[RMDB]
Chemical mapping of a 207-nucleotide RNA with 2A3. The RNA was probed in 150 mM KOAc, 10 mM MgCl2 and 150 mM bicine (pH 8.5) at 24 C.
RNA sequence: GGGAACGACUCGAGUAGAGUCGAAAAAAAAAAAAAAGCACUAGAAUGCAUAUCGCCGCUUACAGAAGCGUGGAUUUUCACAUACCAAUCGGAAGUGUCUGUGCAAAUCUAUCGCAACUGUACACGGCGAUACUGCAGUUAUUGAACAAAAAAAAAAGUUAACUUGAUUGUUCGCAAUCAAGUUAACAAAAGAAACAACAACAACAAC
Reactivity to 2A3 in 0.01 (KOAc 150mM, MgCl2 10mM, bicine 150mM(pH8.5), 24C), signal-to-noise 2, nucleotides 027 to 156: a000a000a000a000a000a000a010a000a130a020g070c040a120c030u040a020g030a270a030u030g000c000a010u000a000u000c000g000c000c000g020c040u030u010a000c000a010g010a050a000g000c020g000u010g000g020a000u000u000u010u000c000a000c000a000u020a000c020c010a100a140u250c140g120g020a160a190g060u100g000u090c010u000g000u000g000c010a000a000a000u020c000u000a050u280c060g000c000a040a000c010u000g000u000a010c000a000c040g010g000c010g000a000u000a000c000u000g000c010a000g000u010u040a110u030u090g210a060a060c080a030a030a070a070a010a070a170a060a050a280